An RNA of 177 nucleotides, treated with DMS and read out base by base.

RNA sequence: GGGAACGACUCGAGUAGAGUCGAAAAGAUAUGGAUGGUGACCCUCUUUCAACAGCAUACGAGUGUUGUUAGCUCGGAAACGAGCUAACAACACUCGUAUGACAUGAAAUGGUCCCAUCCUAAGUCAUCAUACUGCUAACUUCGGUUAGCAGUAUGAAAAAGAAACAACAACAACAAC
Reactivity to DMS in 0.01 (KOAc 150mM, MgCl2 10mM, bicine 150mM(pH8.5), 24C), signal-to-noise 1, nucleotides 027 to 126: g000a080u000a300u000g000g000a000u000g010g000u020g010a060c000c000c000u000c020u000u000u000c000a060a070c300a230g010c000a020u000a020c000g000a080g000u000g000u000u020g000u000u020a000g010c000u000c070g040g000a140a070a270c020g000a020g040c000u000a000a000c000a010a030c000a020c000u010c000g010u000a000u000g000a020c080a100u000g010a000a200a010u000g000g000u020c000c000c010a000u000c000c000u000a020a090g010u000c030a170